This 207-nucleotide RNA was probed chemically with 2A3.
The reactions ran in a buffer of 150 mM KOAc, 10 mM MgCl2 and 150 mM bicine (pH 8.5), at 24 C.
RNA sequence: GGGAACGACUCGAGUAGAGUCGAAAAGAUGUGUGAAAAUGAGGAUGACCAGCUCUGGUUUUCUAGGAGCUAUGGUCUCAUAAUGACAAUAAUCAGCAUAGUGUACUUGUCCUUAAUGUUAUAGCAUGGCAGGAAAGACCAUGGGCUUAGAAGGCAGAUUAUGUACGCGCUUCGGCGCGUACAUAAUAAAAGAAACAACAACAACAAC
Reactivity to 2A3 in 0.01 (KOAc 150mM, MgCl2 10mM, bicine 150mM(pH8.5), 24C), signal-to-noise 1, nucleotides 027 to 156: g110a010u090g050u000g000u030g130a060a050a060a000u090g030a050g060g190a050u140g010a000c000c000a000g060c010u000c000u030g060g200u100u120u100u000c010u130a130g000g090a000g000c010u080a140u130g000g000u020c000u000c000a000u080a010a120u110g110a000c030a030a000u200a080a050u070c090a000g100c040a060u150a050g000u030g070u050a030c110u010u060g030u050c000c000u000u060a020a040u170g060u100u080a080u020a010g000c040a020u080g010g010c000a020g000g080a110a000a000g000a000c040c000a050u050g000g000g000c040u060u110a000g060a110a000g080g000c010a000g000